RNA sequence: GGGAACGACUCGAGUAGAGUCGAAAAGUAUAGAAGCAUGAGACCGCAUGCGCUAUACGAUGAAUCACGGUCGAAUCCGUUGUGCGAAAGCACUUCGGUAAUGCAUAUCGGUAGGCAGAUCUGCCCGGAUCAGCUACCGUAAUUAGUACGGGCAAGACAUGGUGACUAUAUUCGUAUAGUCACCAUGAAAAGAAACAACAACAACAAC
Reactivity to 2A3 in 0.01 (KOAc 150mM, MgCl2 10mM, bicine 150mM(pH8.5), 24C), signal-to-noise 4, nucleotides 027 to 156: g020u010a000u000a010g060a250a030g000c000a000u010g010a020g010a140c000c010g030c030a000u010g010c000g000c010u010a010u000a020c040g020a030u170g140a060a140u200c120a040c090g010g010u010c040g040a040a060u060c000c000g000u000u000g000u000g000c010g070a090a030a030g000c030a000c000u010u010c000g000g010u050a050a040u170g040c070a070u080a090u220c020g010g000u010a020g160g110c110a050g010a010u000c010u040g010c000c000c000g000g000a000u010c020a010g010c000u000a000c000c000g010u010a030a050u050u110a030g090u060a050c040g000g020g000c050a030a010g080a020
Reactivity to DMS in 0.01 (KOAc 150mM, MgCl2 10mM, bicine 150mM(pH8.5), 24C), signal-to-noise 3, nucleotides 027 to 156: g000u000a040u000a050g010a060a120g010c000a020u010g010a160g000a130c110c040g030c010a040u000g000c000g020c010u000a030u000a050c010g030a150u010g010a100a090u010c080a100c000g020g050u000c030g000a210a120u000c000c010g030u000u000g010u000g060c010g020a200a120a300g010c010a000c000u000u010c010g020g010u000a020a060u020g000c070a130u000a090u000c040g020g010u000a060g020g010c040a130g000a070u000c010u000g000c020c030c000g010g010a100u000c020a120g020c020u000a030c020c000g010u010a020a090u000u000a120g000u000a080c020g000g020g030c050a160a140g020a220